[RMDB]
RNA sequence: GGGAACGACUCGAGUAGAGUCGAAAAGAAAGAAAGAAAGAACUCUGUAAAGUGAGUGAUUGCCUGGACCAGGUCGGCGGGCCUGCUCCAGUUUCCUUCGCUCUGCUCAACGGGCAGACCGCCACAAAAAACGCGUGGCUGUUCGCAGCCACGCGAACUCAUCAUACAGGUUCGCCUGUAUGAUGAGAAAAGAAACAACAACAACAAC
Reactivity to 2A3 in 0.01 (KOAc 150mM, MgCl2 10mM, bicine 150mM(pH8.5), 24C), signal-to-noise 1, nucleotides 027 to 156: g030a020a090a010g080a060a100a010g060a070a110a000g030a070a000c000u020c030u050g070u260a180a110a090g140u070g040a000g000u050g000a160u000u160g090c010c010u000g000g000a010c010c000a000g000g010u020c060g000g050c000g020g000g000c000c000u000g010c010u000c000c000a000g000u010u040u020c000c010u010u140c060g020c010u060c030u040g070c000u000c060a080a200c060g010g020g000c000a010g050a070c010c000g000c010c030a090c050a040a180a030a040a010a010c030g000c000g010u020g000g100c000u030g020u080u110c190g030c130a020g010c000c000a000c050g060c000g010a000a000
Source information
The record gives the reactivity of an RNA of 207 nucleotides to 2A3. The reactions ran in a buffer of 150 mM KOAc, 10 mM MgCl2 and 150 mM bicine (pH 8.5), at 24 C. The data come from the RNA Mapping Database (RMDB), library M2RFPK. For 2A3 the reverse transcriptase was SuperScript II with manganese.